Chemical mapping of a 170-nucleotide RNA with 2A3 and DMS. 2A3 is a SHAPE reagent: it acylates the 2'-hydroxyl of flexible nucleotides of all four kinds. The data come from the RNA Mapping Database (RMDB), library 15KLIB. The 2A3 profile rests on 1,324 reads. Conditions: 150 mM KOAc, 10 mM MgCl2 and 150 mM bicine (pH 8.5), 24 C.

[RMDB]
RNA sequence: GGGAACGACUCGAGUAGAGUCGAAAAGAACGUUUAGCAUUUGAGGGACAAAGCCGCCCCCGGGCGCUCCCCUCGGAGAUGUUCCAGGUGGGUUCACAUCCCCAACCCGCGGGCCGGCUACUCUUCUACAGCGGCAGCUUCGGCUGCCGCAAAAGAAACAACAACAACAAC
Reactivity to 2A3 in 0.01 (KOAc 150mM, MgCl2 10mM, bicine 150mM(pH8.5), 24C), signal-to-noise 1, nucleotides 027 to 129: g030a070a000c130g010u020u060u130a000g000c010a170u070u080u050g010a000g080g020g020a060c040a010a160a000g030c030c000g010c060c000c000c000c000g000g050g040c000g000c010u000c000c000c000c000u000c070g000g030a030g010a040u190g090u050u000c020c020a000g120g010u050g050g020g000u030u070c300a200c000a150u180c000c000c000c000a010a030c000c010c040g030c000g000g000g000c040c050g010g000c000u050a030c000u000c000u200u000c030u100a030c000a060
Reactivity to DMS in 0.01 (KOAc 150mM, MgCl2 10mM, bicine 150mM(pH8.5), 24C), signal-to-noise 2, nucleotides 027 to 129: g000a000a000c090g000u010u010u010a040g040c100a130u000u000u050g000a060g000g000g000a060c170a000a300a060g000c030c100g030c140c000c000c000c070g050g010g010c110g040c250u020c070c000c090c000u070c130g000g010a010g000a100u020g040u050u020c000c040a100g050g000u070g110g000g010u030u000c130a160c120a100u020c000c000c050c220a030a030c020c000c000g110c300g000g000g010c020c020g020g020c000u050a010c070u030c070u050u000c120u040a050c280a160